The data come from the RNA Mapping Database (RMDB), library OK2TST.
Structure probing data (2A3 and DMS) for a 177-nucleotide construct.
RNA sequence: GGGAACGACUCGAGUAGAGUCGAAAAUAAAAAAGAAAGAAAGAAAGAAACUUCCUCGCCCUUGUUCUGCUACGCUGUUCCCAUCGUAAGAUGCUCCGUGGAAGGGAGCCGAGCGGUGGGCAGAGGCUACCGUCGAUUUAUUCGUAAAUCGACGGUAAAAAGAAACAACAACAACAAC
Reactivity to 2A3 in 0.01 (KOAc 150mM, MgCl2 10mM, bicine 150mM(pH8.5), 24C), signal-to-noise 1, nucleotides 027 to 126: u080a020a060a000a000a020a020g060a030a100a010g050a030a080a020g040a080a190a000g050a050a090a030c020u040u030c010c000u000c020g020c000c000c030u020u010g030u090u020c030u020g050c000u040a040c050g000c050u020g030u140u100c020c000c000a000u000c000g000u010a000a020g030a090u100g010c000u000c030c020g070u100g110g080a080a090g150g000g000a000g000c010c000g010a020g020c000g010g010u010g010g010g000c010a000g010a020g010g000c010
Reactivity to DMS in 0.01 (KOAc 150mM, MgCl2 10mM, bicine 150mM(pH8.5), 24C), signal-to-noise 4, nucleotides 027 to 126: u030a020a030a050a040a030a050g010a110a060a050g010a040a060a050g000a070a060a090g000a110a090a070c070u000u010c020c010u000c050g000c030c010c010u010u000g000u000u000c030u000g010c040u000a070c280g010c040u000g000u010u020c020c000c000a040u000c020g000u000a030a300g000a110u010g020c010u000c000c010g020u010g010g000a110a160g000g010g010a020g020c020c020g000a230g000c010g010g020u000g020g010g000c050a010g000a080g010g010c140